This 177-nucleotide RNA was probed chemically with 2A3 and DMS.

[RMDB]
RNA sequence: GGGAACGACUCGAGUAGAGUCGAAAAUAGCAUUAUAGCGCGCUAUAUAGCGCCGCGGCGCGCUACGAUCGCGAUGCUAUAAUAUUACGGCUAUACGUACGAUGCCGGCUACGCGUAGCAUCGGCGCAUCUAGCCGUAGCUUCGGCUACGGCUAGAUAAAAGAAACAACAACAACAAC
Reactivity to 2A3 in 0.01 (KOAc 150mM, MgCl2 10mM, bicine 150mM(pH8.5), 24C), signal-to-noise 1, nucleotides 027 to 126: u010a000g000c000a000u010u000a030u060a070g000c000g000c020g000c030u030a020u000a000u040a260g000c030g000c020c030g110c060g050g070c050g000c000g030c010u030a030c080g100a060u140c080g030c080g040a030u030g000c010u010a000u020a100a040u160a080u090u120a060c060g030g010c010u030a020u010a070c040g040u040a030c030g040a040u150g080c060c000g090g000c060u090a020c140g030c040g080u050a020g010c010a040u090c030g050g000c000g010c000
Reactivity to DMS in 0.01 (KOAc 150mM, MgCl2 10mM, bicine 150mM(pH8.5), 24C), signal-to-noise 2, nucleotides 027 to 126: u000a000g010c030a040u000u000a090u000a010g010c010g000c000g010c010u000a100u000a170u020a120g010c010g030c000c030g030c300g000g000c170g050c030g010c000u000a020c190g020a120u000c250g020c080g000a020u000g030c000u000a000u000a060a090u010a100u010u000a100c200g010g000c030u000a020u000a060c040g020u020a060c060g000a070u000g010c050c040g040g020c100u010a040c090g010c060g020u000a090g010c010a060u010c010g000g000c010g010c100
Overview:
DMS adducts were read by reverse transcription with MarathonRT. The RNA was probed in 150 mM KOAc, 10 mM MgCl2 and 150 mM bicine (pH 8.5) at 24 C. It was measured as part of the RMDB library OK2TRN.